RNA sequence: GGGAACGACUCGAGUAGAGUCGAAAAGACGAACGAAAACACAAAUGUUCCACGGUGCAGAAGGGUCCCUCACAUGAGGAUCACCCAUGUAACUCGGACAGGAUAUGCUUUUGGCAAAAAGAGAGAAGUGUGUACUACCUUUCGAGGUAGUACACACAAAAGAAACAACAACAACAAC
Reactivity to DMS in 0.01 (KOAc 150mM, MgCl2 10mM, bicine 150mM(pH8.5), 24C), signal-to-noise 2, nucleotides 027 to 126: g010a130c060g010a110a120c040g000a080a030a060a020c050a040c060a020a120a120u000g030u020u020c010c020a090c190g000g000u000g000c010a030g000a110a160g000g010g000u000c160c010c000u010c000a100c210a100u020g010a030g020g000a040u000c190a030c000c010c000a050u000g010u010a020a020c040u000c110g030g000a040c030a000g020g000a180u000a040u000g010c020u000u000u000u000g000g030c140a060a020a020a030a040g000a090g000a130g050a120a090
Reactivity to 2A3 in 0.01 (KOAc 150mM, MgCl2 10mM, bicine 150mM(pH8.5), 24C), signal-to-noise 3, nucleotides 027 to 126: g090a000c100g000a090a000c020g050a080a030a050a000c130a030c020a050a100a060u110g040u160u100c020c000a020c080g010g010u010g000c020a030g030a300a120g000g000g010u040c010c000c000u050c000a250c040a190u300g000a010g000g020a060u160c020a010c000c000c020a010u010g000u010a030a050c000u020c040g000g000a020c000a010g080g000a080u100a040u150g040c000u000u040u100u110g080g000c040a060a080a000a040a010g120a040g020a010g040a230a030